[RMDB]
RNA sequence: GGGAACGACUCGAGUAGAGUCGAAAAUGGACGCCAAUUCGACCUGGAUCGCAGCUGUCGAGCUGUUCCAGAAGGAGGGGGCCGAGUGGCUGACGGCCGCUGACGCGCCGCAGCUCAUGGCGCUGCGCCCGAGGAUUGGAUUCGUCCAAUCCUCGGGAAAAGAAACAACAACAACAAC
Reactivity to DMS in 0.01 (KOAc 150mM, MgCl2 10mM, bicine 150mM(pH8.5), 24C), signal-to-noise 2, nucleotides 027 to 126: u010g000g010a130c070g010c060c100a090a140u000u000c020g040a140c090c000u000g020g010a110u020c200g020c040a030g000c010u000g030u020c190g010a020g020c000u010g010u010u000c000c000a060g000a110a140g010g000a060g020g000g010g000g010c010c030g000a090g010u000g000g000c000u010g000a160c090g000g020c060c050g050c050u010g040a060c210g000c110g010c000c000g000c010a000g000c000u010c080a070u010g010g000c050g010c040u000g000c050g030
Reactivity to 2A3 in 0.01 (KOAc 150mM, MgCl2 10mM, bicine 150mM(pH8.5), 24C), signal-to-noise 1, nucleotides 027 to 126: u180g010g050a030c050g020c050c050a030a140u070u070c050g030a090c020c030u040g030g010a030u160c040g030c050a000g000c000u150g080u300c070g040a000g000c020u050g030u030u000c000c000a070g140a130a080g050g020a030g000g020g010g040g000c000c000g060a010g070u070g000g070c020u090g030a100c030g060g000c140c030g040c040u070g090a050c040g020c000g040c030c030g000c000a000g000c010u030c020a090u160g010g010c030g030c030u040g000c000g010
Chemical mapping of a 177-nucleotide RNA with DMS and 2A3. The RNA was probed in 150 mM KOAc, 10 mM MgCl2 and 150 mM bicine (pH 8.5) at 24 C.